[RMDB]
An RNA of 177 nucleotides, treated with DMS and read out base by base. DMS adducts were read by reverse transcription with MarathonRT. For DMS, 850 sequencing reads were counted. Conditions: 150 mM KOAc, 10 mM MgCl2 and 150 mM bicine (pH 8.5), 24 C.

RNA sequence: GGGAACGACUCGAGUAGAGUCGAAAAAUGAAGCUGUCCGGCGAGUGCCGCAUGGACUCCGACUGUCCGGCCAUGUGCCACUGCGAGGGCACCACCGUGGAUUGCACGGGCCGGGGCCUGAAGGAGAAAGCCGUCAUAUGUUCGCAUAUGACGGCUUAAAAGAAACAACAACAACAAC
Reactivity to DMS in 0.01 (KOAc 150mM, MgCl2 10mM, bicine 150mM(pH8.5), 24C), signal-to-noise 1, nucleotides 027 to 126: a080u010g030a080a020g020c040u000g030u000c060c010g000g010c010g010a170g030u010g020c120c020g080c080a020u000g000g000a150c050u000c030c000g010a300c160u010g000u000c030c040g020g030c000c010a110u010g030u020g020c140c120a070c000u000g040c020g000a110g010g000g060c050a060c110c030a130c000c000g040u000g020g000a170u000u000g010c020a030c000g000g020g000c120c070g070g010g010g000c080c020u010g020a070a100g040g000a130g000a210